[RMDB]
RNA sequence: GGGAACGACUCGAGUAGAGUCGAAAAGAGGGCCCUUCUCCAUCCUUCUCCUUCUUUCCGAGAAUUCCUUUGAUGUUUCCCAGCCAGGGAUUGUCGUCCUCUAGCUUCUUGAUCUUCUUCUUGACCUUCCGGAGAUCUCUCUCGAGCUCAUCCAUCUACCACAUUAAUCGUUCGCGAUUAAUGUGGUAAAAGAAACAACAACAACAAC
Reactivity to 2A3 in 0.01 (KOAc 150mM, MgCl2 10mM, bicine 150mM(pH8.5), 24C), signal-to-noise 1, nucleotides 027 to 156: g050a000g000g050g000c000c050c000u030u050c030u000c010c000a090u070c000c000u050u040c030u030c020c020u060u080c040u050u100u050c040c040g040a040g060a160a110u060u080c040c000u100u090u190g110a090u080g000u060u030u030c010c020c010a020g030c040c030a040g060g010g020a020u030u080g080u050c020g000u010c000c010u000c000u000a010g020c010u080u060c000u020u170g070a120u080c000u050u000c000u070u010c000u030u110g090a140c020c000u050u040c060c040g080g000a150g030a200u060c010u000c000u000c000u000c020g010a000g000c060u030c020a080u060c030c000a030u020c020u040
The record gives the reactivity of an RNA of 207 nucleotides to 2A3. For 2A3, 1,512 sequencing reads were counted. 2A3 is a SHAPE reagent: it acylates the 2'-hydroxyl of flexible nucleotides of all four kinds. The reactions ran in a buffer of 150 mM KOAc, 10 mM MgCl2 and 150 mM bicine (pH 8.5), at 24 C. For 2A3 the reverse transcriptase was SuperScript II with manganese.